Chemical mapping of a 177-nucleotide RNA with DMS and 2A3. Reactivities are given for positions 27 through 126. 2A3 is a SHAPE reagent: it acylates the 2'-hydroxyl of flexible nucleotides of all four kinds. For 2A3, 1,132 sequencing reads were counted. Conditions: 150 mM KOAc, 10 mM MgCl2 and 150 mM bicine (pH 8.5), 24 C. 2A3 adducts were read by reverse transcription with SuperScript II with manganese. The data come from the RNA Mapping Database (RMDB), library OK1LIB.
RNA sequence: GGGAACGACUCGAGUAGAGUCGAAAAAUUGGCAUCAGCAUAUAAUUGUUUUUAUGAUGGUUACUCACAUGAUGAUGCAGAAACUCAGUAUGGCAUAACUGUUCUAAACCAUAUGGGUAGUAUGGCAACCGGGAUAUAACUUCGGUUAUAUCCCGGUAAAAGAAACAACAACAACAAC
Reactivity to DMS in 0.01 (KOAc 150mM, MgCl2 10mM, bicine 150mM(pH8.5), 24C), signal-to-noise 2, nucleotides 027 to 126: a090u030u000g000g000c020a000u000c020a020g000c010a010u000a160u000a040a100u000u010g000u000u040u010u050u010a130u040g040a060u030g020g000u020u000a030c300u020c140a080c260a030u000g020a030u000g060a030u060g000c000a050g000a090a050a060c040u000c000a040g030u030a060u000g000g000c060a180u050a030a020c070u000g000u000u000c110u000a020a090a100c050c040a000u000a010u010g000g030g010u000a080g000u000a020u000g000g010c170a040
Reactivity to 2A3 in 0.01 (KOAc 150mM, MgCl2 10mM, bicine 150mM(pH8.5), 24C), signal-to-noise 2, nucleotides 027 to 126: a000u060u140g090g000c000a010u000c050a000g000c020a020u100a000u080a200a140u130u180g050u220u090u010u000u020a230u160g060a000u030g020g020u060u210a120c030u120c070a110c010a110u130g000a040u070g020a000u070g040c000a000g120a010a040a000c000u000c040a110g060u080a050u050g030g000c070a050u070a090a190c050u140g030u150u060c070u150a050a130a240c010c030a050u020a020u070g000g020g040u000a010g060u000a070u050g000g010c030a000